An RNA of 207 nucleotides, treated with DMS and 2A3 and read out base by base. The 2A3 profile rests on 972 reads. Conditions: 150 mM KOAc, 10 mM MgCl2 and 150 mM bicine (pH 8.5), 24 C. Reactivities are rounded to 0.1 and cut off at 0 and 3.

RNA sequence: GGGAACGACUCGAGUAGAGUCGAAAAGUAUCCCUAGAUGAUAAAACACCGCACAUGGCUCGUAAGAGCGGUUAAAUUAGCAAGUAAUGCAAAUUACGCGAGGUACCGCAUGGCCUAGGCUCGUUAGAAAAGGGAGAAUCCUUCGGGAUUCUCCCAACUGUGUCUUAUGGUUCGCCAUAAGACACAGAAAAGAAACAACAACAACAAC
Reactivity to DMS in 0.01 (KOAc 150mM, MgCl2 10mM, bicine 150mM(pH8.5), 24C), signal-to-noise 2, nucleotides 027 to 156: g000u010a150u000c010c000c020u010a130g010a060u000g020a110u010a060a080a110a220c060a080c040c000g020c050a110c080a140u000g000g040c040u000c040g000u000a080a130g020a110g060c010g000g010u000u000a050a040a130u000u000a130g000c050a080a120g020u000a030a030u010g000c220a080a070a090u000u000a010c040g000c000g000a100g020g000u000a070c000c020g020c000a170u000g020g010c000c000u010a110g020g000c040u000c040g030u000u000a080g010a050a050a110a210g000g020g020a040g000a020a030u000c000c010u010u020c300g040g020g000a030u000u000c000u000c010c000c000a000a000
Reactivity to 2A3 in 0.01 (KOAc 150mM, MgCl2 10mM, bicine 150mM(pH8.5), 24C), signal-to-noise 2, nucleotides 027 to 156: g030u010a080u140c000c000c000u010a030g020a180u110g020a030u150a120a100a020a000c060a020c040c030g030c020a060c020a090u110g040g000c000u060c140g100u100a120a040g050a040g070c030g000g010u030u040a050a080a120u030u070a010g010c070a150a060g030u050a070a060u070g080c090a000a000a190u080u010a010c030g020c000g030a040g000g060u070a040c000c000g030c020a030u030g020g000c000c020u010a040g060g000c000u010c090g060u020u030a020g110a100a060a050a030g000g000g000a000g000a010a000u000c000c000u020u030c120g080g000g000a010u020u000c000u010c000c010c000a000a000